RNA sequence: GGGAACGACUCGAGUAGAGUCGAAAACGACCCUUAUUAAGCCGAGGGUCACCUAGCCAACUGACGUUGUUAGUGAAUACACAUUGUUCACAUCAUACAUAAGCCAAUCGCACUCAUUUUGCGGUUGCCGUUGAUGGAAUUUCGAUUCCAUCAACGGAAAAGAAACAACAACAACAAC
Reactivity to DMS in 0.01 (KOAc 150mM, MgCl2 10mM, bicine 150mM(pH8.5), 24C), signal-to-noise 2, nucleotides 027 to 126: c300g000a000c000c000c000u020u020a030u020u010a060a170g040c230c160g000a000g010g000g000u000c010a070c000c000u000a090g020c090c110a090a150c070u040g000a080c120g000u020u000g000u000u050a090g000u000g000a070a010u020a050c210a170c300a110u020u030g020u000u000c020a090c020a100u000c130a040u060a080c080a100u060a040a040g000c190c010a000a010u000c000g000c000a030c240u010c180a140u010u000u000u000g010c000g030g010u000u000g000
Reactivity to 2A3 in 0.01 (KOAc 150mM, MgCl2 10mM, bicine 150mM(pH8.5), 24C), signal-to-noise 4, nucleotides 027 to 126: c100g020a010c010c000c000u030u040a170u100u220a080a010g110c050c050g000a030g040g000g000u000c000a000c000c000u050a050g040c010c080a130a020c080u140g070a130c130g020u020u060g050u080u090a090g000u000g030a010a060u070a060c180a040c100a240u050u210g010u060u050c000a000c010a010u070c030a060u080a180c030a090u220a070a030g020c060c000a010a000u030c010g000c030a030c070u160c080a190u110u150u080u190g000c010g000g000u000u010g020